[RMDB]
Chemical mapping of a 177-nucleotide RNA with 2A3 and DMS.
RNA sequence: GGGAACGACUCGAGUAGAGUCGAAAAGGUGCUAAUAUAGCUAUAGUAAUAAACGUAAUUUAGAAUAGAGGUUACGGACUCGGGGGCAGUACCCGACGCCUCCACCAAAACUUUCAAUAAAAAUAAAAUUUGAUGACAUCUUCGGAUGUCAUCAAGUAAAAGAAACAACAACAACAAC
Reactivity to 2A3 in 0.01 (KOAc 150mM, MgCl2 10mM, bicine 150mM(pH8.5), 24C), signal-to-noise 2, nucleotides 027 to 126: g030g060u080g030c010u040a110a080u120a120u070a240g010c000u060a000u000a090g070u060a020a220u070a140a190a010c030g000u000a020a000u060u050u070a150g100a170a100u030a130g090a030g070g000u000u000a000c040g030g030a070c060u000c100g000g010g000g000g010c000a020g040u040a170c000c020c000g020a040c030g000c000c000u050c000c000a030c050c010a000a100a020a080c000u060u090u010c000a010a060u090a210a080a000a030a000u110a010a120a030
Reactivity to DMS in 0.01 (KOAc 150mM, MgCl2 10mM, bicine 150mM(pH8.5), 24C), signal-to-noise 2, nucleotides 027 to 126: g010g000u020g020c010u000a050a130u000a070u030a160g000c000u000a080u010a050g000u000a060a050u020a090a120a170c050g010u000a030a030u000u000u040a120g020a110a140u020a090g030a080g000g000u000u020a020c060g010g000a070c190u010c090g000g000g040g000g000c010a040g010u000a100c020c000c000g040a130c030g000c020c000u010c030c000a100c110c120a040a100a040a040c130u010u020u000c000a060a050u050a010a040a030a070a080u020a000a020a050
Record summary: It was measured as part of the RMDB library OK1LIB. For 2A3 the reverse transcriptase was SuperScript II with manganese. The RNA was probed in 150 mM KOAc, 10 mM MgCl2 and 150 mM bicine (pH 8.5) at 24 C.